[RMDB]
RNA sequence: GGGAACGACUCGAGUAGAGUCGAAAAGACACCACGGAUGAUCCGGCGGGUCGAAGACGAUCUGCGCCGCCGGGCGCGUGGAUUGCUCGAUGGCGUAGAACCCGGAGCGCCUUUCGACUUCGUGGUCCGGUACAUCAACAUUCGUGUUGAUGUACCGAAAAGAAACAACAACAACAAC
Reactivity to 2A3 in 0.01 (KOAc 150mM, MgCl2 10mM, bicine 150mM(pH8.5), 24C), signal-to-noise 3, nucleotides 027 to 126: g070a010c040a010c040c010a010c020g010g030a070u110g010a150u080c070c020g000g000c010g020g050g000u200c080g010a060a010g070a020c040g020a080u000c020u030g020c020g000c000c010g000c000c000g000g000g000c000g000c010g050u250g120g090a300u120u240g000c010u000c000g020a020u010g000g000c000g000u010a010g010a040a020c030c010c000g020g010a040g020c010g000c010c000u030u080u060c020g030a040c000u030u020c020g010u030g000g010u020c020
Reactivity to DMS in 0.01 (KOAc 150mM, MgCl2 10mM, bicine 150mM(pH8.5), 24C), signal-to-noise 3, nucleotides 027 to 126: g020a150c150a110c020c000a010c010g010g010a060u010g020a060u000c050c050g010g010c070g000g010g000u020c010g000a070a070g000a270c160g010a060u000c010u000g020c000g010c000c010g000c020c010g000g000g010c010g010c120g050u010g000g000a120u000u010g020c020u000c000g010a030u010g000g000c000g020u000a030g000a040a100c080c040c010g000g020a240g000c060g000c030c000u000u010u010c030g000a050c040u000u000c010g000u000g010g000u000c090